[RMDB]
RNA sequence: GGGAACGACUCGAGUAGAGUCGAAAAGGCGGCAAAUCGCCGGGCUGGGUGAACCAAACGCAGACGUUCCUCAUCAAAUAUGCGCUGUCGCAAUUGAGUUACGUCAUCCAGACCGCGAUCGGCCCCGAGGUCACCGGCGUGCAGAAUCCCGGCACACCGAGCAGUUUAUAUUCGUAUAAACUGCUCGAAAAGAAACAACAACAACAAC
Reactivity to DMS in 0.01 (KOAc 150mM, MgCl2 10mM, bicine 150mM(pH8.5), 24C), signal-to-noise 1, nucleotides 027 to 156: g000g020c120g010g040c030a070a070a040u000c020g030c070c000g040g040g010c000u000g000g030g000u010g010a080a070c070c060a000a070a070c070g020c000a120g030a130c020g020u000u000c060c030u000c060a070u010c070a070a110a150u000a110u000g020c000g070c060u010g000u000c000g050c050a050a200u020u060g010a110g030u000u000a070c020g000u000c000a040u000c010c010a080g010a020c040c010g010c000g000a030u000c010g010g070c000c010c010c000g010a070g010g010u000c030a070c020c020g030g050c070g030u010g000c020a070g030a070a220u010c000c010c050g000g030c010a040c020a150c030
Reactivity to 2A3 in 0.01 (KOAc 150mM, MgCl2 10mM, bicine 150mM(pH8.5), 24C), signal-to-noise 4, nucleotides 027 to 156: g040g010c110g020g000c010a060a070a030u030c020g090c150c110g040g000g000c000u000g000g010g010u010g040a040a030c030c040a050a050a220c080g010c050a050g090a150c050g040u120u080c030c080u050c040a130u080c050a040a140a090u300a110u190g030c030g030c060u190g170u300c020g010c060a050a060u020u050g040a100g050u100u110a080c070g060u020c030a000u000c000c000a000g020a020c000c000g000c000g010a010u010c020g020g000c000c000c000c000g000a070g000g060u100c040a060c100c050g060g000c050g020u020g000c030a010g030a220a070u040c020c020c000g000g050c030a010c020a010c020
The record gives the reactivity of an RNA of 207 nucleotides to DMS and 2A3. For 2A3 the reverse transcriptase was SuperScript II with manganese. Values are in units of 0.01, from 0 to 300, in steps of 10.